[RMDB]
An RNA of 207 nucleotides, treated with 2A3 and DMS and read out base by base. 2A3 adducts were read by reverse transcription with SuperScript II with manganese. DMS adducts were read by reverse transcription with MarathonRT.
RNA sequence: GGGAACGACUCGAGUAGAGUCGAAAAGGAGGAAGGAUGUCCAAGCGGAGACGCCCUGAGGAAUCGCUCAUUAGAGUGUGCCUAACAGAUUGUGUUAGGGUAAACAGGUCCGGUUUACCACUCUUCAGAAACCUCAGGGGACAGUGACCGGACCAAACGUUGUUCUGUAAUUCGUUACAGAACAACGAAAAGAAACAACAACAACAAC
Reactivity to 2A3 in 0.01 (KOAc 150mM, MgCl2 10mM, bicine 150mM(pH8.5), 24C), signal-to-noise 5, nucleotides 027 to 156: g030g010a010g000g030a060a010g020g020a030u060g040u050c050c030a090a000g040c030g030g010a050g010a050c040g040c000c000c000u020g000a000g020g010a040a030u060c050g010c070u170c100a100u090u130a010g000a000g000u030g030u130g060c020c000u010a010a000c010a090g300a300u220u230g110u050g000u090u000a010g010g050g020u120a050a050a030c040a050g000g000u020c010c000g000g040u030u030u060a020c030c000a010c010u000c000u060u050c080a050g030a030a040a030c010c000u010c000a010g000g010g000g010a010c020a020g050u030g050a000c000c000g000g000a000c000c000a010a010a000
Reactivity to DMS in 0.01 (KOAc 150mM, MgCl2 10mM, bicine 150mM(pH8.5), 24C), signal-to-noise 2, nucleotides 027 to 156: g020g020a040g010g020a080a070g000g010a090u000g010u010c020c050a130a100g000c060g000g020a130g000a080c090g010c020c010c000u020g000a030g010g000a050a180u000c030g010c190u000c090a110u000u000a060g010a040g030u000g000u000g000c010c000u050a030a020c010a070g010a300u010u000g010u000g020u000u000a020g010g020g040u010a010a050a090c030a100g020g010u010c010c000g030g000u010u000u000a120c090c000a030c010u010c000u000u000c090a080g000a040a050a300c030c010u000c010a030g010g040g020g020a020c110a070g020u000g000a050c020c010g030g020a030c000c000a010a020a110